[RMDB]
RNA sequence: GGGAACGACUCGAGUAGAGUCGAAAAGACACCCACCGCCAUGUAGAGGCCUCAGGGGGCGCCCACUCCCAUGCCGCCACCUCAGGGGACACCCACCGCCAUGCAGAGGCCUCAGGGGGCGCCCACUGGAUAAUCGUACUUUCGAGUACGAUUAUCCAAAAGAAACAACAACAACAAC
Reactivity to 2A3 in 0.01 (KOAc 150mM, MgCl2 10mM, bicine 150mM(pH8.5), 24C), signal-to-noise 3, nucleotides 027 to 126: g040a020c030a110c030c000c010a020c020c020g050c010c010a100u130g070u160a060g030a020g060g000c010c010u030c050a050g040g030g000g010g000c010g000c010c010c000a040c030u020c020c020c000a030u100g020c020c020g040c010c010a070c000c010u060c020a030g040g000g000g030a050c000a070c030c010c000a020c000c020g020c020c000a050u130g000c040a030g020a020g040g000c010c000u010c000a010g000g010g000g030g000c010g010c010c000c000a040c060u030
Reactivity to DMS in 0.01 (KOAc 150mM, MgCl2 10mM, bicine 150mM(pH8.5), 24C), signal-to-noise 1, nucleotides 027 to 126: g040a100c170a090c050c000c000a070c140c020g000c000c000a070u000g050u060a150g000a110g000g020c000c030u030c080a080g000g000g000g010g000c000g060c030c020c010a160c080u000c060c040c020a100u000g000c000c040g020c010c040a070c050c050u000c030a060g000g000g000g000a130c000a020c030c020c010a150c020c000g020c000c000a100u010g010c070a110g010a030g010g020c050c000u000c000a010g000g000g000g000g060c020g000c000c000c000a060c110u020